[RMDB]
RNA sequence: GGGAACGACUCGAGUAGAGUCGAAAAACCAGGCCUGUGCAGGAUUGGGGGAAGGCACAAAGUCGCCAGAUCUGCAGCAAGUGGCUUCUGGCACUUAAGGUUUUUGCAGCAGAUGGGGCUCUAGAGCUGGGCCAGGAAGCCUGUGUCAGUCCCUAGACUUUAAGGAAACGUUCGCGUUUCCUUAAAGAAAAGAAACAACAACAACAAC
Reactivity to DMS in 0.01 (KOAc 150mM, MgCl2 10mM, bicine 150mM(pH8.5), 24C), signal-to-noise 1, nucleotides 027 to 156: a170c030c020a130g020g020c020c020u010g050u000g010c090a170g030g010a110u010u010g010g000g030g060g000a040a080g010g010c050a060c090a090a000a070g020u000c050g100c000c000a070g010a090u000c040u010g010c040a160g000c070a100a110g020u010g010g010c020u000u010c020u000g030g000c030a050c010u000u000a100a130g030g000u000u000u000u000u010g020c000a090g000c030a050g020a170u000g000g020g010g000c000u010c040u000a080g020a160g000c020u000g000g020g070c010c000a160g030g000a100a070g010c010c000u020g010u000g010u000c030a150g010u000c010c000c000u000a120g000a220
Reactivity to 2A3 in 0.01 (KOAc 150mM, MgCl2 10mM, bicine 150mM(pH8.5), 24C), signal-to-noise 2, nucleotides 027 to 156: a000c040c000a050g060g000c050c020u120g000u080g030c040a020g030g080a120u070u100g050g000g020g030g030a050a030g080g010c030a010c050a040a070a010g010u070c060g090c040c010a000g030a110u000c010u060g000c000a010g030c060a220a070g080u070g080g000c000u020u000c020u040g040g030c010a010c010u100u110a060a110g080g010u030u070u010u100u120g080c030a030g000c000a010g010a090u050g010g000g000g050c030u000c050u090a040g010a020g060c020u040g000g030g050c020c010a000g070g010a020a020g000c000c020u030g020u040g010u030c010a010g070u000c010c000c000u040a050g020a070